[RMDB]
RNA sequence: GGGAACGACUCGAGUAGAGUCGAAAAAAGUAUGUACGGUGGAGCAAAAAGCUGGACCGAGUCACACCCAGUAAUGGUGCGUAAACACUUUAGAGCUCGGUGGGGAAGUAAAUCCGGUCGGAAGGUCGUGACUACAACGACAGUAGAUGAUGCCAUAAUUAGAGCUAAUCUUCGGAUUAGCUCUAAUAAAAGAAACAACAACAACAAC
Reactivity to 2A3 in 0.01 (KOAc 150mM, MgCl2 10mM, bicine 150mM(pH8.5), 24C), signal-to-noise 2, nucleotides 027 to 156: a000a000g080u080a060u090g030u040a000c070g030g000u020g010g030a030g000c120a030a100a110a050a030g040c030u040g000g020a040c060c010g020a030g000u000c010a010c000a000c040c010c010a010g020u030a010a100u090g000g000u030g010c040g090u120a040a180a040c020a000c040u100u110u110a130g010a050g110c000u000c010g030g000u090g010g000g010g010a040a010g010u040a000a000a060u040c020c010g010g040u050c010g040g040a050a050g060g050u070c020g020u010g040a040c020u030a030c090a110a010c020g040a030c040a030g020u020a020g010a040u070g040a010u080g000c050c000a010u030a120
Reactivity to DMS in 0.01 (KOAc 150mM, MgCl2 10mM, bicine 150mM(pH8.5), 24C), signal-to-noise 3, nucleotides 027 to 156: a060a100g030u000a050u000g010u000a070c060g010g000u000g030g020a140g030c050a060a090a090a080a090g000c040u010g010g020a060c030c030g020a100g020u000c020a080c040a120c040c010c020a070g010u020a070a110u010g020g000u000g030c010g000u000a070a070a100c020a050c040u000u000u000a090g020a160g000c010u000c040g020g020u010g020g010g000g010a040a060g010u000a050a040a060u010c020c020g000g010u000c030g000g010a100a060g020g030u000c040g000u000g010a140c080u000a060c030a070a030c000g010a030c010a060g030u000a070g030a090u000g000a100u000g000c000c020a070u000a080